This 207-nucleotide RNA was probed chemically with DMS and 2A3.
The RNA was probed in 150 mM KOAc, 10 mM MgCl2 and 150 mM bicine (pH 8.5) at 24 C.
It was measured as part of the RMDB library ARCHII.
For DMS, 2,312 sequencing reads were counted.
For DMS the reverse transcriptase was MarathonRT.

RNA sequence: GGGAACGACUCGAGUAGAGUCGAAAAACCGUUAUGUUCGCAUAACGGUGUAGAGGAUCCGUGGCGCAAUUGGUAGCGCGUCUGACUCCAGAUCAGAAGGUUGCGUGUUCGAUUCACGUCGGGUCCACCAGGGGCGAGAUGACUUCGGUCAUCUCAAAUAUCCCAGGACUUUCGAGUCCUGGGAUAUAAAAGAAACAACAACAACAAC
Reactivity to DMS in 0.01 (KOAc 150mM, MgCl2 10mM, bicine 150mM(pH8.5), 24C), signal-to-noise 2, nucleotides 027 to 156: a030c000c000g030u010u010a020u000g000u000u000c300g000c000a030u010a000a020c000g000g040u000g020u000a050g020a150g030g030a020u000c020c010g020u000g030g000c000g000c040a040a030u030u010g050g010u010a050g000c040g010c030g030u000c010u020g010a120c010u030c110c300a170g000a090u000c000a000g030a060a130g000g010u010u000g010c000g020u010g030u000u010c020g000a300u000u000c020a010c000g010u000c000g000g000g020u000c000c020a060c000c020a080g000g000g000g020c170g000a050g000a020u000g000a040c020u000u000c270g010g000u000c000a000u000c000u000c000a020a040
Reactivity to 2A3 in 0.01 (KOAc 150mM, MgCl2 10mM, bicine 150mM(pH8.5), 24C), signal-to-noise 1, nucleotides 027 to 156: a000c000c010g000u000u010a000u010g040u080u160c200g000c200a000u000a000a000c000g000g000u010g010u080a130g010a150g010g010a010u010c000c010g010u010g020g000c010g000c000a050a060u100u130g100g080u270a060g000c000g010c000g010u010c000u000g010a000c040u030c200c160a070g040a300u000c000a000g010a000a000g000g020u090u020g000c000g000u000g000u010u010c000g000a010u000u000c010a010c000g000u000c000g000g000g000u010c000c000a000c010c010a010g040g010g020g010c090g010a000g000a010u000g000a000c010u050u010c300g040g020u000c000a030u020c000u040c000a010a000